[RMDB]
RNA sequence: GGGAACGACUCGAGUAGAGUCGAAAAAGAGCGGUGAUUACUUCAGAGUCUGAAAAGACUCUACAUCCGUCAUCGUUUAAUUAUUACUGGUUUAUUAAGACGGAUGUAGAUAGACCAGUAGUUGAUAGAUACAGUUAGUAUUCGUACUGGCUGUAUCAAAAGAAACAACAACAACAAC
Reactivity to 2A3 in 0.01 (KOAc 150mM, MgCl2 10mM, bicine 150mM(pH8.5), 24C), signal-to-noise 9, nucleotides 027 to 126: a000g120a010g010c040g010g030u060g040a110u090u160a090c050u070u100c050a010g000a000g000u000c000u000g020a010a010a000a020g000a000c000u000c000u000a000c000a000u000c010c010g020u000c000a030u050c020g030u040u090u150a170a130u100u210a070u040u040a010c000u000g000g040u020u030u020a070u070u130a140a050g030a030c040g030g020a030u060g010u020a040g020a020u040a000g010a000c000c010a000g000u010a020g010u000u040g050a100u080a200
Reactivity to DMS in 0.01 (KOAc 150mM, MgCl2 10mM, bicine 150mM(pH8.5), 24C), signal-to-noise 7, nucleotides 027 to 126: a090g000a070g010c030g020g000u000g000a060u010u020a060c160u020u020c120a060g000a030g010u000c000u000g000a100a070a120a010g000a010c000u000c000u000a030c030a010u000c040c040g000u000c000a090u020c160g010u020u020u030a060a080u040u030a060u020u000a010c010u000g000g000u000u000u000a010u010u010a070a090g010a050c040g000g000a020u010g010u010a050g000a040u010a010g000a000c010c010a000g010u000a010g010u000u000g000a110u030a090